[RMDB]
RNA sequence: GGGAACGACUCGAGUAGAGUCGAAAAAGGAAGGGUCAGACCGCAGGACUUGCGGUGCGGUAUUGUGGAGACAUACCGCAAGGUUUCCAUCAAGCCUGAUGGUUACAAGGCGGCUUCUUGCAAAGAUCACUUCAUGGUGCUUCGGCACCAUGAAGUGAAAAGAAACAACAACAACAAC
Reactivity to 2A3 in 0.01 (KOAc 150mM, MgCl2 10mM, bicine 150mM(pH8.5), 24C), signal-to-noise 2, nucleotides 027 to 126: a000g000g030a020a000g020g010g020u010c010a050g040a070c030c000g030c000a000g090g120a210c050u040u050g020c030g000g000u020g000c000g020g000u030a060u110u230g010u100g000g090a000g000a010c000a020u000a000c010c000g000c000a000a050g120g000u020u020u000c040c000a000u010c000a080a070g080c040c100u070g000a010u030g030g020u020u010a080c090a170a100g030g000c000g090g000c000u060u010c010u060u000g000c050a120a070a040g090a060u000
Record summary:
An RNA of 177 nucleotides, treated with 2A3 and read out base by base. For 2A3 the reverse transcriptase was SuperScript II with manganese. Reactivities are given for positions 27 through 126.